[RMDB]
RNA sequence: GGGAACGACUCGAGUAGAGUCGAAAACAACUGGGGGAUGUUACCGCUGCAAAUGGCGGAAGUACCAACCUUUGAAGUGGGGGAUUACAUUUACAUCCCUGGCAUUAAAGCGGCGCUGGAUAAUCCGGAUUACAGUUACGUUCGCGUAACUGUAAUCAAAAGAAACAACAACAACAAC
Reactivity to 2A3 in 0.01 (KOAc 150mM, MgCl2 10mM, bicine 150mM(pH8.5), 24C), signal-to-noise 2, nucleotides 027 to 126: c040a010a070c100u160g050g000g000g010g000a000u010g030u040u050a060c000c000g010c010u030g100c110a070a100a160u230g020g000c000g020g010a000a000g000u010a040c000c030a010a100c040c020u090u090u250g150a150a050g040u170g020g000g000g000g000a020u090u010a050c030a090u160u130u040a020c010a010u000c010c000c010u000g040g020c010a030u050u220a130a100a040g030c030g040g000c050g000c040u050g000g010a040u080a150a070u110c080c030g030
Reactivity to DMS in 0.01 (KOAc 150mM, MgCl2 10mM, bicine 150mM(pH8.5), 24C), signal-to-noise 5, nucleotides 027 to 126: c080a100a120c140u000g030g000g020g010g010a060u000g000u000u000a170c040c010g020c000u010g000c180a090a090a140u020g010g010c050g020g000a060a080g000u010a060c080c040a090a200c060c030u000u000u010g010a100a060g040u000g000g020g000g000g000a180u000u000a050c080a120u000u000u010a040c060a040u000c010c000c000u000g000g010c050a090u010u000a040a120a130g020c070g010g000c060g020c050u000g010g000a090u010a050a120u010c050c080g030

The record gives the reactivity of an RNA of 177 nucleotides to 2A3 and DMS. For DMS the reverse transcriptase was MarathonRT. Conditions: 150 mM KOAc, 10 mM MgCl2 and 150 mM bicine (pH 8.5), 24 C. Values cover nucleotides 27 to 126.